This 207-nucleotide RNA was probed chemically with 2A3. The 2A3 profile rests on 458 reads. The data come from the RNA Mapping Database (RMDB), library M2RFPK.
[RMDB]
RNA sequence: GGGAACGACUCGAGUAGAGUCGAAAAUUAAUACUGCUACAUUUUUAAGACCCUUAGUUAUUUAGCUUUACCGCUCAGGAUGGGGUGCAGCGUUCCUGCAAUAUCCAGGGCACCUAGGUGCAGCCUUCAUGCCUCAUGCCGUUCGCGGCAUGAGGAAGGCCUAAAGUAAGUUCGCUUACUUUAGGCCAAAAGAAACAACAACAACAAC
Reactivity to 2A3 in 0.01 (KOAc 150mM, MgCl2 10mM, bicine 150mM(pH8.5), 24C), signal-to-noise 1, nucleotides 027 to 156: u150u040a120a010u090a140c020u030g050c000u040a020c050a200u150u170u110u140u130a100a010g030a070c090c000c000u020u020a040g080u130u050a150u130u250u090a000g000c010u010u080u070a050c050c000g030c000u010c050a010g010g010a050u070g070g000g080g000u030g000c030a010g030c070g080u120u090c000c030u010g000c020a060a060u010a020u170c070c000a010g000g000g050c030a060c000c000u030a040g090g000u070g080c060a010g020c010c000u110u110c060a050u120g060c000c000u010c000a000u000g000c000c000g030u060u070c280g040c000g010g000c020a000u000g000a000g000g000a000a000